Annotation:
Chemical mapping of a 177-nucleotide RNA with 2A3 and DMS. Reactivities are rounded to 0.1 and cut off at 0 and 3. It was measured as part of the RMDB library OK1LIB. Conditions: 150 mM KOAc, 10 mM MgCl2 and 150 mM bicine (pH 8.5), 24 C. For DMS, 739 sequencing reads were counted.
RNA sequence: GGGAACGACUCGAGUAGAGUCGAAAACAACACCUUACCCUUGCCGUGAAGAAGGCAGGAUCCGCCUCUAUCAUAUCAAGCGAACAAUAUCAAGACGUACCCACAUUUCUUUCAGGCCUAGGAACGGGCACGCGAACUUGUUCGCAAGUUCGCGUGCAAAAGAAACAACAACAACAAC
Reactivity to 2A3 in 0.01 (KOAc 150mM, MgCl2 10mM, bicine 150mM(pH8.5), 24C), signal-to-noise 3, nucleotides 027 to 126: c020a010a040c000a050c010c000u040u140a100c000c000c000u030u070g000c000c000g070u070g140a090a090g040a070a090g010g000c020a010g040g030a010u000c060c000g010c000c000u000c000u030a170u140c050a020u090a030u140c150a180a000g000c060g070a070a060c020a100a090u070a060u270c020a020a030g050a080c030g010u100a030c010c010c000a060c000a090u000u020u010c010u050u160u020c110a030g040g000c000c040u030a080g040g020a030a080c040g060g000
Reactivity to DMS in 0.01 (KOAc 150mM, MgCl2 10mM, bicine 150mM(pH8.5), 24C), signal-to-noise 1, nucleotides 027 to 126: c050a000a080c040a140c000c000u000u000a080c180c000c000u000u000g000c080c030g000u030g000a060a040g000a250a110g000g000c100a130g000g130a010u000c000c090g000c050c040u000c170u000a000u040c050a000u000a150u010c120a300a300g000c000g000a040a000c040a060a030u010a100u000c140a030a000g040a060c080g000u000a000c000c000c000a180c170a190u050u000u000c090u000u000u000c060a010g010g000c000c000u000a060g080g060a000a060c300g060g000
Reactivities are given for positions 27 through 126.